[RMDB]
RNA sequence: GGGAACGACUCGAGUAGAGUCGAAAAGAUGCCGUCAAGACCCACGGCGAGACCCCGCGCUACGGCGUGGCGAUCCCUACCGGGUUCGAGACGUUCGAGGCGCGCAUUAGCCGGCUCGCCGGCUCGGCCAUGGGGCACUCUUCGGAGUGCCCCAUGGAAAAGAAACAACAACAACAAC
Reactivity to DMS in 0.01 (KOAc 150mM, MgCl2 10mM, bicine 150mM(pH8.5), 24C), signal-to-noise 1, nucleotides 027 to 126: g010a120u010g040c010c000g030u000c030a050a120g010a210c060c050c030a130c100g000g000c040g000a080g000a160c010c040c110c020g000c000g000c000u000a170c010g010g000c000g030u000g000g010c110g010a030u000c000c000c020u000a050c300c300g000g000g050u000u000c020g000a070g020a020c000g000u000u000c000g070a300g000g000c000g000c000g030c300a030u000u010a120g000c070c120g000g050c020u030c040g010c200c000g040g070c040u000c010g010g030